[RMDB]
The record gives the reactivity of an RNA of 177 nucleotides to DMS and 2A3. For DMS, 2,227 sequencing reads were counted. 2A3 adducts were read by reverse transcription with SuperScript II with manganese. High 2A3 reactivity points to a flexible backbone, as in loops and unpaired stretches.
RNA sequence: GGGAACGACUCGAGUAGAGUCGAAAAUGUCGGCGCUCGUCUUCGUCCGUGGAGAAGGCAUAGUAGCCAACACCGUGGGUGCGCGCUUCGUCAAAGAAGACAUCCUGGUAGUGGACAUCAGGCUAAACAGUGAGCCAUUAUUCGUAAUGGCUCACUGAAAAGAAACAACAACAACAAC
Reactivity to DMS in 0.01 (KOAc 150mM, MgCl2 10mM, bicine 150mM(pH8.5), 24C), signal-to-noise 2, nucleotides 027 to 126: u000g000u000c040g020g080c030g050c020u010c300g080u030c050u000u000c020g000u000c000c030g070u030g090g030a090g020a090a240g030g070c050a060u020a150g000u020a130g020c010c030a050a260c040a050c040c020g060u090g000g030g000u020g000c120g000c020g000c030u000u000c080g000u070c140a070a130a030g000a000a040g010a070c000a040u020c000c000u040g000g000u000a060g000u040g000g000a130c220a030u010c030a020g000g000c190u000a030a070a220
Reactivity to 2A3 in 0.01 (KOAc 150mM, MgCl2 10mM, bicine 150mM(pH8.5), 24C), signal-to-noise 4, nucleotides 027 to 126: u220g040u050c020g040g000c020g010c030u050c060g060u000c040u030u030c010g070u020c020c050g060u050g040g010a140g000a120a070g000g000c010a020u130a140g170u130a030g020c000c000a000a000c000a000c010c010g030u030g000g000g010u040g000c040g000c010g000c050u130u050c030g140u110c100a120a030a030g010a030a000g010a010c010a020u020c000c000u020g070g030u060a070g040u050g150g040a000c000a040u010c040a020g070g000c030u150a130a060a040